[RMDB]
RNA sequence: GGGAACGACUCGAGUAGAGUCGAAAAGAUAUGGAUCUAAGAGCGAUAAGUCGCCACUCGGAAACGAGUGGGCGACUUUUGACGCUCUGUCCUAAGUCAAAGCUGCUUCGGUUCGCCGAAGCAGCAAGCCGUAUAUGUAGUUCGCUACAUAUACGGCAAAAGAAACAACAACAACAAC
Reactivity to 2A3 in 0.01 (KOAc 150mM, MgCl2 10mM, bicine 150mM(pH8.5), 24C), signal-to-noise 1, nucleotides 027 to 126: g040a000u080a050u170g000g000a010u080c120u300a180a020g000a000g020c020g050a100u020a200a020g020u000c030g010c000c000a040c000u000c010g020g040a090a080a050c020g000a010g020u000g000g000g010c000g000a010c020u000u010u000u000g000a000c030g000c000u000c000u010g000u010c000c000u030a130a060g030u050c080a000a050a130g000c000u010g000c000u000u000c010g020g090u090u080c250g020c100c000g000a010a030g000c000a010g010c000a010a010
Reactivity to DMS in 0.01 (KOAc 150mM, MgCl2 10mM, bicine 150mM(pH8.5), 24C), signal-to-noise 3, nucleotides 027 to 126: g010a040u010a300u010g000g000a030u000c130u010a080a030g010a020g040c010g010a210u010a010a010g020u000c010g000c000c000a040c000u000c000g020g000a100a080a180c000g010a010g020u000g020g040g010c000g010a000c010u000u000u010u010g000a140c040g000c000u000c000u000g010u000c000c000u000a080a190g000u000c030a070a090a120g000c000u000g000c000u000u000c000g010g000u000u010c270g020c000c000g010a020a010g010c000a000g010c010a010a040